Source: RMDB library M2PK50, as collected in RNAgym. Structure probing data (2A3 and DMS) for a 177-nucleotide construct. For DMS the reverse transcriptase was MarathonRT. The 2A3 profile rests on 20,207 reads. The DMS profile rests on 26,342 reads.

[RMDB]
RNA sequence: GGGAACGACUCGAGUAGAGUCGAAAAGAACGCCACUUCGGUGGCGUUCGAAGAUCUACCACACGUUGAUCACUAUCGUGUGAGACAUCGAUAGAUGUCAAAUGGUCCGGAAGUUCGCUUCCGGAAAACGAAGAAUAUUGUUCGCAAUAUUCUUCGUAAAAGAAACAACAACAACAAC
Reactivity to 2A3 in 0.01 (KOAc 150mM, MgCl2 10mM, bicine 150mM(pH8.5), 24C), signal-to-noise 8, nucleotides 027 to 126: g000a000a000c000g000c010c000a010c010u040u080c210g090g000u000g010g000c000g000u000u000c000g000a000a000g020a020u000c020u060a150c050c020a010c010a000c010g010u030u080g090a170u210c100a060c210u140a050u110c040g010u010g000u000g020a090g000a010c000a010u010c010g050a030u110a260g020a010u010g000u000c000a010a030a140u190g100g020u010c000c000g000g010a010a000g000u030u130c200g020c100u000u000c000c000g000g000a010a010a000
Reactivity to DMS in 0.01 (KOAc 150mM, MgCl2 10mM, bicine 150mM(pH8.5), 24C), signal-to-noise 9, nucleotides 027 to 126: g000a010a010c000g010c000c000a010c000u000u010c190g040g020u000g000g010c000g000u000u000c000g000a110a100g010a110u000c040u000a150c160c000a020c020a020c010g010u000u000g010a160u010c190a110c130u010a040u000c010g020u000g010u000g000a270g010a030c010a000u000c010g010a160u020a110g000a020u000g000u000c000a070a060a080u000g010g010u000c000c010g000g010a020a010g010u000u010c230g000c000u000u000c000c000g010g000a000a010a060
2A3 adducts were read by reverse transcription with SuperScript II with manganese.